[RMDB]
RNA sequence: GGGAACGACUCGAGUAGAGUCGAAAAGAUAUGGAUGAUUAUAAGGAUUGGACGUAACAUCACUUCGGAAACGAAGUGUGGUCCUUGAUUUAAUAUCCUAAGUCGUGGCAUCGAUUCGUCGAUGCAAUACCCCAGCUCGUUUCGACGAGCUGGGGUAAAAAGAAACAACAACAACAAC
Reactivity to DMS in 0.01 (KOAc 150mM, MgCl2 10mM, bicine 150mM(pH8.5), 24C), signal-to-noise 1, nucleotides 027 to 126: g010a040u000a300u020g020g020a020u000g000a060u010u000a090u000a070a010g000g000a120u010u010g000g020a050c000g030u000a020a170c150a030u000c010a020c000u000u000c000g030g010a110a110a230c010g000a010a000g010u000g000u000g000g000u000c000c020u030u010g000a300u000u000u000a010a100u000a070u000c000c010u000a050a090g000u010c010g010u000g000g000c000a010u000c000g010a010u000u010c240g010u000c000g010a000u000g040c000a040a090
Description:
An RNA of 177 nucleotides, treated with DMS and read out base by base. For DMS the reverse transcriptase was MarathonRT. The DMS profile rests on 741 reads.